RNA sequence: GGGAACGACUCGAGUAGAGUCGAAAAUUCCAUUUGAGUAUCCUGAAAACGGGCUUUUCAGCAUGGAACGUAUAUAUUAAAUAGUAGGAGUGCAUAGUGGCCCGUAUAGCAGGCAUUAACAUUCCUGAAAACGUGAAAAGGUUCGCCUUUUCACGAAGCUGACUAGUAAGUUCGCUUACUAGUCAGCAAAAGAAACAACAACAACAAC
Reactivity to DMS in 0.01 (KOAc 150mM, MgCl2 10mM, bicine 150mM(pH8.5), 24C), signal-to-noise 1, nucleotides 027 to 156: u000u000c000c020a140u010u020u010g040a050g040u000a070u010c020c000u000g010a130a090a140a140c030g030g000g000c030u030u010u000u010c100a280g050c130a040u010g030g010a080a070c050g000u040a070u020a130u000a110u010u000a030a060a120u000a100g000u000a050g030g000a250g030u000g010c010a180u000a120g010u000g000g000c000c000c040g030u000a040u000a080g050c060a060g000g020c120a070u000u010a050a090c120a200u000u000c020c010u000g030a080a130a100a140c050g010u000g000a000a000a030a010g000g040u000u030c300g070c060c000u000u000u000u000c000a000c000g000a020a080
Reactivity to 2A3 in 0.01 (KOAc 150mM, MgCl2 10mM, bicine 150mM(pH8.5), 24C), signal-to-noise 2, nucleotides 027 to 156: u050u020c000c000a020u190u060u050g070a060g030u090a030u090c000c010u010g030a040a050a000a000c000g000g000g010c000u110u060u030u110c010a020g000c000a010u040g060g040a170a010c020g090u110a020u000a020u030a070u190u300a170a120a080u120a040g090u010a020g000g110a080g000u000g000c050a030u040a090g050u020g030g000c030c070c000g000u020a020u000a010g040c020a010g000g000c000a000u000u040a030a020c020a050u040u130c000c000u010g070a080a060a040a080c010g000u000g000a000a010a000a000g060g020u040u090c150g070c000c000u000u000u000u000c010a000c000g010a000a000
An RNA of 207 nucleotides, treated with DMS and 2A3 and read out base by base. In probing experiments dimethyl sulfate is read out at A N1 and C N3, which are open when not base-paired.